[RMDB]
RNA sequence: GGGAACGACUCGAGUAGAGUCGAAAAAGCACCGGUACGCCGGUGCAUCUCCGUUGAGCCCCGCGCCUUCGCCCGGGUGGGGCGCUGCGCUGUCAGCGGCCUUGCUGACGACCGAUACGUCGGUCGACCAAAGGCACUAUUUCGAUAGUGCCUUUGGAAAAGAAACAACAACAACAAC
Reactivity to DMS in 0.01 (KOAc 150mM, MgCl2 10mM, bicine 150mM(pH8.5), 24C), signal-to-noise 4, nucleotides 027 to 126: a100g000c010a010c010c000g000g010u010a090c260g040c000c000g040g000u000g000c020a020u000c010u000c010c080g020u000u010g000a090g000c020c020c000c020g010c080g000c030c040u010u000c120g010c080c070c110g010g010g020u000g000g000g010g010c000g010c050u000g000c070g000c110u000g000u010c030a040g010c020g030g010c120c080u000u010g000c030u010g010a100c000g000a010c010c010g000a040u000a090c160g020u000c010g010g010u000c010g000a280
Reactivity to 2A3 in 0.01 (KOAc 150mM, MgCl2 10mM, bicine 150mM(pH8.5), 24C), signal-to-noise 7, nucleotides 027 to 126: a000g010c010a010c000c010g000g010u090a080c270g030c030c000g000g010u000g000c000a010u000c000u010c000c010g040u020u090g040a020g010c000c000c010c000g030c020g150c000c030u140u120c070g060c030c030c000g080g010g020u060g010g010g000g000c000g000c000u020g000c050g020c070u110g070u110c010a000g010c000g040g100c020c020u090u180g010c020u040g030a060c020g000a000c010c000g000a010u030a060c220g080u020c010g010g000u000c000g010a010